An RNA of 177 nucleotides, treated with 2A3 and DMS and read out base by base.
RNA sequence: GGGAACGACUCGAGUAGAGUCGAAAAACAAUCUGGUUCGCCAGAUUGUCAAUGUCUUCCUAAAAUCCUUGGAAGACUGUAUAUAUAGAAUAAAGGUCGAAAGUACCUGUGCUUUCGAGCACAGGAAGACUAUGUAAUUGUUCGCAAUUACAUAGUCAAAAGAAACAACAACAACAAC
Reactivity to 2A3 in 0.01 (KOAc 150mM, MgCl2 10mM, bicine 150mM(pH8.5), 24C), signal-to-noise 9, nucleotides 027 to 126: a000c000a000a010u000c000u010g000g040u030u040c120g050c050c000a000g000a010u000u000g010u000c010a020a050u090g000u000c000u010u000c000c000u010a010a010a010a110u030c000c010u000u010g000g000a000a000g000a000c010u000g020u000a140u000a030u000a010u040a150g070a160a100u240a300a180a010g020g000u020c040g020a110a110a010g050u060a070c000c000u000g000u000g000c000u110u050u130c300g050a000g000c000a000c000a000g000g000a000a000
Reactivity to DMS in 0.01 (KOAc 150mM, MgCl2 10mM, bicine 150mM(pH8.5), 24C), signal-to-noise 6, nucleotides 027 to 126: a030c000a010a000u000c000u010g010g010u000u010c220g040c010c000a000g000a000u000u000g010u000c090a110a070u010g000u000c000u000u000c000c000u010a010a000a000a140u010c000c000u000u010g010g010a020a010g000a020c000u010g000u000a070u010a140u010a210u000a200g000a130a110u010a060a110a020g000g020u000c230g000a090a050a060g010u000a090c000c010u000g010u000g000c000u000u000u010c170g010a010g020c000a000c010a000g000g010a050a060
Source: RMDB library M2PK50, as collected in RNAgym. DMS adducts were read by reverse transcription with MarathonRT. The RNA was probed in 150 mM KOAc, 10 mM MgCl2 and 150 mM bicine (pH 8.5) at 24 C. For 2A3, 24,075 sequencing reads were counted.